[RMDB]
RNA sequence: GGGAACGACUCGAGUAGAGUCGAAAAAAGUAUUAUCUAUAAACAAGGAUGGUUCUCUACAUAACCCCAGUACGAUGAUCACAUUCAGGAAAUUAAACAUUAAGGCAAUGCUAUUAUGAAAUAUAGAAGUACGGUAAUGAUUCGUCAUUACCGUACUAAAAGAAACAACAACAACAAC
Reactivity to DMS in 0.01 (KOAc 150mM, MgCl2 10mM, bicine 150mM(pH8.5), 24C), signal-to-noise 2, nucleotides 027 to 126: a070a090g010u020a060u010u000a110u000c010u000a090u000a160a090a130c060a080a110g010g010a020u010g000g010u000u010c020u000c010u010a030c020a040u010a090a250c060c000c000c040a070g000u010a020c100g000a030u010g010a070u000c060a070c060a050u000u000c050a060g010g000a060a060a060u000u000a040a120a090c070a030u000u000a070a080g000g020c140a050a020u000g020c010u000a060u010u010a080u000g010a070a070a040u000a060u010a010g000a090
Reactivity to 2A3 in 0.01 (KOAc 150mM, MgCl2 10mM, bicine 150mM(pH8.5), 24C), signal-to-noise 2, nucleotides 027 to 126: a010a000g060u080a070u170u010a040u000c060u070a170u160a250a070a000c030a100a040g010g010a050u020g050g010u050u010c010u000c010u060a020c030a140u160a190a260c010c020c000c000a000g030u050a050c130g010a050u120g000a040u040c040a010c000a220u060u070c000a010g020g140a170a140a030u060u070a110a240a000c020a050u070u100a030a000g050g050c030a040a050u070g000c020u010a020u100u020a050u110g020a070a110a040u200a010u020a040g050a080